[RMDB]
RNA sequence: GGGAACGACUCGAGUAGAGUCGAAAACGUGGCUUGAGGAUUCGGUGCGGGUCGCCAGUUAAUCCGCCGUGUGCUCCGGAUGAGCGCGACGGUAACCCUGGAAUUGUGCUGUGUGCUGGCUGUGUCGGUUAUAGACCGUUUUCGAACGGUCUAUAACAAAAGAAACAACAACAACAAC
Reactivity to 2A3 in 0.01 (KOAc 150mM, MgCl2 10mM, bicine 150mM(pH8.5), 24C), signal-to-noise 3, nucleotides 027 to 126: c030g040u050g020g000c010u070u110g060a040g070g060a120u160u110c070g010g010u080g020c010g020g050g020u050c030g030c040c000a000g000u010u070a050a050u050c010c020g000c000c000g060u120g080u070g000c000u020c060c100g250g090a220u270g000a140g010c020g000c030g050a000c000g010g000u020a030a040c020c020c000u020g000g030a100a080u120u080g030u060g030c010u020g020u000g020u040g080c020u020g050g000c020u030g000u020g050u140c070g010
Reactivity to DMS in 0.01 (KOAc 150mM, MgCl2 10mM, bicine 150mM(pH8.5), 24C), signal-to-noise 7, nucleotides 027 to 126: c090g020u000g010g020c040u000u000g010a100g010g000a110u000u010c070g020g020u000g020c040g010g000g020u010c070g010c030c020a050g010u000u010a160a090u010c010c010g030c010c020g020u000g010u010g010c020u000c010c190g010g010a140u010g000a050g010c020g020c010g010a020c020g000g000u000a070a120c150c110c010u010g010g010a100a100u010u000g010u010g010c020u000g010u000g010u000g000c020u000g010g010c050u010g020u010g000u000c090g010

This 177-nucleotide RNA was probed chemically with 2A3 and DMS. It was measured as part of the RMDB library OK2TRN. For 2A3 the reverse transcriptase was SuperScript II with manganese. For DMS the reverse transcriptase was MarathonRT.